[RMDB]
RNA sequence: GGGAACGACUCGAGUAGAGUCGAAAACGAUGAAAGCUCCAUCUUCCGGAACUCCGGUAACGCGAACGACGGAAUGGCGCGGGAAGGCUUUCGAUCCAUAGAGGCUGGACUGUGAAUUGACCCAUCCUCCUCAAUGACGGUUCGCCGUCAUUGAGGAAAAAGAAACAACAACAACAAC
Reactivity to 2A3 in 0.01 (KOAc 150mM, MgCl2 10mM, bicine 150mM(pH8.5), 24C), signal-to-noise 2, nucleotides 027 to 126: c040g060a030u180g100a030a070a050g030c010u050c030c000a030u040c030u120u020c010c000g030g040a100a080c040u010c010c050g020g100u100a100a080c010g000c050g050a080a030c050g170a030c020g000g040a040a060u130g020g000c110g010c050g100g020g020a030a010g030g010c060u020u120u020c000g010a040u050c060c010a040u060a110g090a030g050g080c020u030g020g050a000c000u000g080u070g110a070a090u160u100g050a090c010c000c010a020u060c020c000
Reactivity to DMS in 0.01 (KOAc 150mM, MgCl2 10mM, bicine 150mM(pH8.5), 24C), signal-to-noise 1, nucleotides 027 to 126: c070g040a080u000g020a020a040a020g030c000u010c050c010a010u000c060u000u000c020c020g030g000a190a190c200u000c020c050g030g010u000a050a110c070g030c090g030a010a090c100g010a300c020g000g010a040a020u010g000g060c290g000c060g000g000g010a130a100g000g000c050u000u000u000c020g010a030u010c060c070a060u030a090g000a130g000g010c050u010g020g030a170c010u000g000u000g010a120a070u000u000g000a060c040c000c000a090u010c030c050

Description
Structure probing data (2A3 and DMS) for a 177-nucleotide construct. Conditions: 150 mM KOAc, 10 mM MgCl2 and 150 mM bicine (pH 8.5), 24 C. Source: RMDB library OK2TRN, as collected in RNAgym. DMS adducts were read by reverse transcription with MarathonRT. The DMS profile rests on 903 reads.